[RMDB]
RNA sequence: GGGAACGACUCGAGUAGAGUCGAAAAGAACGCUGGCCAUAAUCACAGCACAAGCGUGCACACCAGCUUGUCGCACAACACCUUCAAGGCCACGAGCGGUGUCGUAGAUCUUGCGCACAUCUGGAUCCCGCACACUACUCUUCGGAGUAGUGUGCGGAAAAGAAACAACAACAACAAC
Reactivity to 2A3 in 0.01 (KOAc 150mM, MgCl2 10mM, bicine 150mM(pH8.5), 24C), signal-to-noise 1, nucleotides 027 to 126: g030a130a000c030g000c060u010g000g010c040c010a020u120a080a070u220c050a040c010a090g000c050a010c000a060a000g040c100g040u070g000c100a050c010a030c060c040a000g020c010u020u030g050u050c090g040c000a100c040a050a190c010a110c020c020u190u210c090a050a160g110g010c020c020a000c070g000a010g050c020g000g020u030g020u040c030g040u020a000g050a160u000c030u120u120g070c050g000c000a040c030a070u000c030u020g020g070a030u040c040